The data come from the RNA Mapping Database (RMDB), library OK3TST. This 207-nucleotide RNA was probed chemically with 2A3 and DMS.
[RMDB]
RNA sequence: GGGAACGACUCGAGUAGAGUCGAAAAUGCAUAAAUGUUACAGAUGCCCAGCUGAAAUUGUUAAGACAGUCUCUGCACUUGUUUAUGAAAACAAAUUUGUACCUGUCAACCCAGAAUCAAAGCAGUGCUUCAAAAUGUUUGUAAAAGGUCAGGUUCAACUAGUACUAGGAUUCGUCCUAGUACUAGUAAAAGAAACAACAACAACAAC
Reactivity to 2A3 in 0.01 (KOAc 150mM, MgCl2 10mM, bicine 150mM(pH8.5), 24C), signal-to-noise 3, nucleotides 027 to 156: u110g030c020a060u080a100a130a040u200g020u060u160a120c060a030g080a030u060g010c000c000c000a020g000c020u020g020a040a090a160u130u100g040u050u110a060a020g010a020c020a020g080u030c070u030c030u110g000c020a000c050u010u050g090u050u070u100a150u140g080a080a060a020a000c020a010a070a030u080u160u090g010u010a030c000c000u010g040u060c040a040a090c020c040c000a030g070a100a040u050c070a050a000a060g050c040a020g010u020g070c040u050u050c020a030a080a080a140u080g030u050u130u080g070u110a070a060a030a030g040g030u050c030a010g000g020u010u050c010a010
Reactivity to DMS in 0.01 (KOAc 150mM, MgCl2 10mM, bicine 150mM(pH8.5), 24C), signal-to-noise 2, nucleotides 027 to 156: u010g010c060a070u000a040a100a090u010g010u010u000a110c050a090g010a090u000g020c020c000c050a160g000c010u000g010a040a140a110u000u010g010u010u000a100a130g010a090c050a070g000u010c040u020c040u000g030c050a050c070u000u000g000u010u000u000a110u000g010a090a030a060a090c040a020a040a130u000u010u000g010u000a070c080c010u010g010u000c010a090a120c060c030c020a150g010a050a100u020c050a010a070a150g010c010a070g010u000g030c040u000u000c090a040a030a070a110u000g000u000u000u020g020u000a010a040a090a080g000g010u000c040a010g010g010u000u000c030a130
2A3 adducts were read by reverse transcription with SuperScript II with manganese.
The RNA was probed in 150 mM KOAc, 10 mM MgCl2 and 150 mM bicine (pH 8.5) at 24 C.
DMS adducts were read by reverse transcription with MarathonRT.
For DMS, 5,065 sequencing reads were counted.